[RMDB]
RNA sequence: GGGAACGACUCGAGUAGAGUCGAAAAAGCCAUACCACUACGAUGGUAUGGCAAGUCCGUGACGGCGAUGGAUCCCGCCUGGCCGAUGCCGAACUGCCGAUCUGGCUGAUGGUUCCUGCCCCGUCAAAAAACGUAAAGCACUUCGGUGCUUUACGAACGUAGUUGUAGAGUUCGCUCUACAACUACGAAAAGAAACAACAACAACAAC
Reactivity to 2A3 in 0.01 (KOAc 150mM, MgCl2 10mM, bicine 150mM(pH8.5), 24C), signal-to-noise 7, nucleotides 027 to 156: a000g000c010c000a000u000a000c010c010a020c030u300a130c150g300a300u020g000g000u000a000u000g000g000c000a000a010g030u000c020c010g030u030g010a010c000g000g020c100g030a020u060g000g010a010u060c000c020c000g020c010c020u020g010g000c010c010g050a060u130g070c040c050g150a170a100c100u110g020c020c010g050a070u050c060u080g020g000c030u040g030a130u120g020g010u010u020c010c000u040g040c010c010c000c000g000u000c000a040a030a030a040a030a030c010g000u000a000a000a000g000c000a000c010u030u110c210g090g000u000g000c000u010u000u000a000c000g000a030a000
Reactivity to DMS in 0.01 (KOAc 150mM, MgCl2 10mM, bicine 150mM(pH8.5), 24C), signal-to-noise 3, nucleotides 027 to 156: a090g010c000c010a020u010a000c000c000a040c020u020a110c180g030a200u000g010g030u000a010u020g000g000c000a010a010g010u000c020c030g010u010g000a050c010g000g020c040g020a160u000g010g000a070u000c010c020c070g040c010c010u010g000g000c000c040g010a080u010g030c030c020g010a090a100c090u000g020c030c020g020a090u000c010u010g030g010c000u010g010a150u010g020g020u000u000c010c030u000g010c070c080c000c000g030u000c020a000a030a080a070a080a150c020g020u000a010a000a000g000c010a010c000u000u010c300g070g020u000g000c000u000u000u000a000c030g010a020a090
An RNA of 207 nucleotides, treated with 2A3 and DMS and read out base by base. For DMS, 7,718 sequencing reads were counted. As a SHAPE reagent, 2A3 marks flexible, mostly unpaired nucleotides at the ribose 2'-OH.